[RMDB]
Structure probing data (2A3) for a 207-nucleotide construct.
Conditions: 150 mM KOAc, 10 mM MgCl2 and 150 mM bicine (pH 8.5), 24 C.
The data come from the RNA Mapping Database (RMDB), library M2RFPK.
For 2A3, 988 sequencing reads were counted.

RNA sequence: GGGAACGACUCGAGUAGAGUCGAAAAAAACUUUUGUGACUUGCUGAAACGGGACUAAUCUCCUCACCGAGGCUAAGCAAGUAAAAUACGACUCUCAUAUCCUUACCUGAGGGUGGUAAGGAAAUAACCUGCAACGCUUCCUUCGGGAAGCGUUGAACCAUCCCACAGAGUUCGCUCUGUGGGAUGGAAAAGAAACAACAACAACAAC
Reactivity to 2A3 in 0.01 (KOAc 150mM, MgCl2 10mM, bicine 150mM(pH8.5), 24C), signal-to-noise 1, nucleotides 027 to 156: a000a000a000c140u180u130u070u170g150u030g080a040c000u000u000g000c000u010g010a120a010a060c030g010g010g020a020c080u120a090a120u050c050u030c020c000u010c010a030c000c040g020a040g000g120c080u130a040a000g020c010a040a010g030u070a060a130a000a000u060a010c010g000a000c020u030c000u000c040a030u040a040u160c010c000u000u000a000c000c000u060g030a150g000g080g040u020g010g000u000a000a000g000g030a010a010a010u010a000a010c030c080u090g000c000a000a000c020g020c010u000u020c010c000u030u060c170g020g010g000a000a010g000c000g000u000u000g010a000a000